[RMDB]
RNA sequence: GGGAACGACUCGAGUAGAGUCGAAAAAUACAAGGGGAGGUUUCGGCCAAAUGUUGUAUGCAGGAAGCGUGAGGAAGGUAGCACUUAGACACUCACGAGUAGCGGUUCGGCAGUAGUGCUAAAAUGAGACAGUACGAAAAGUUCGCUUUUCGUACAAGAUAGGAUAGUACUUCGGUACUAUCCUAUCAAAAGAAACAACAACAACAAC
Reactivity to 2A3 in 0.01 (KOAc 150mM, MgCl2 10mM, bicine 150mM(pH8.5), 24C), signal-to-noise 7, nucleotides 027 to 156: a000u180a020c060a050a060g010g010g010g010a040g010g040u020u030u120c060g050g000c020c010a060a070a040u120g010u080u040g030u060a060u090g020c030a010g030g030a050a030g040c040g030u030g010a020g020g020a050a030g030g010u060a010g020c020a020c050u040u050a030g020a050c030a010c080u040c010a030c050g030a030g030u060a020g040c040g030g040u070u060c030g040g000c020a030g020u110a010g010u010g030c030u050a020a030a020a110u100g000a020g020a030c080a060g000u000a000c000g000a000a000a000a000g020u050u090c190g050c100u000u000u000u000c000g000u000a000c000a000a000
Reactivity to DMS in 0.01 (KOAc 150mM, MgCl2 10mM, bicine 150mM(pH8.5), 24C), signal-to-noise 4, nucleotides 027 to 156: a110u000a060c040a050a070g000g010g010g010a090g010g010u000u000u000c060g020g000c040c030a060a100a090u000g020u000u000g010u010a080u000g020c010a120g000g000a080a110g020c040g010u000g020a070g020g020a100a080g030g020u000a060g020c020a070c060u000u000a100g010a120c060a090c030u000c020a100c040g010a140g030u010a050g030c040g000g020u000u000c040g010g010c050a100g020u000a040g010u000g020c030u000a020a030a050a090u000g000a170g010a120c060a120g000u000a010c000g010a010a010a020a040g010u000u000c300g030c020u000u000u010u000c000g010u000a010c000a010a050
Structure probing data (2A3 and DMS) for a 207-nucleotide construct.
Values cover nucleotides 27 to 156.
2A3 adducts were read by reverse transcription with SuperScript II with manganese.
The 2A3 profile rests on 8,530 reads.
The data come from the RNA Mapping Database (RMDB), library M2RFPK.
The reactions ran in a buffer of 150 mM KOAc, 10 mM MgCl2 and 150 mM bicine (pH 8.5), at 24 C.